[RMDB]
RNA sequence: GGGAACGACUCGAGUAGAGUCGAAAACGUAAUAUGUUCGCAUAUUACGAAAUCUCCAAUCAUGGCUAACCAGGAUCCUCCGAUGAUUUAAAGCCCUCGGUAAAAGGAGCGGGUUCGCCCGCUCCAAGACUGUUAUGAAGUUCGCUUCAUAACAGUCAAAAGAAACAACAACAACAAC
Reactivity to 2A3 in 0.01 (KOAc 150mM, MgCl2 10mM, bicine 150mM(pH8.5), 24C), signal-to-noise 1, nucleotides 027 to 126: c020g020u000a000a000u000a030u000g020u020u030c060g000c110a000u000a000u010u020a000c000g000a040a040a030u060c030u020c000c020a030a060u080c060a100u130g060g000c030u060a020a110c030c030a070g170g000a080u050c010c030u080c010c060g100a090u080g020a020u060u120u220a130a080a030g030c000c000c010u020c010g080g050u100a080a060a050a130g000g000a000g000c000g010g020g040u030u010c110g080c010c000c000g070c020u010c000c000a000a000
Reactivity to DMS in 0.01 (KOAc 150mM, MgCl2 10mM, bicine 150mM(pH8.5), 24C), signal-to-noise 2, nucleotides 027 to 126: c010g030u000a000a010u000a010u010g020u000u000c180g010c010a010u000a000u000u000a000c000g000a020a060a100u000c080u010c020c130a070a080u010c080a050u010g040g010c050u000a090a090c060c030a040g000g000a110u000c060c040u000c040c010g000a060u000g010a070u000u000u000a050a100a130g000c070c050c050u000c040g020g020u010a010a050a130a100g010g000a040g010c010g010g000g000u010u000c170g000c000c000c000g030c010u000c000c000a030a030
An RNA of 177 nucleotides, treated with 2A3 and DMS and read out base by base. The reactions ran in a buffer of 150 mM KOAc, 10 mM MgCl2 and 150 mM bicine (pH 8.5), at 24 C. For 2A3 the reverse transcriptase was SuperScript II with manganese. The 2A3 profile rests on 1,356 reads.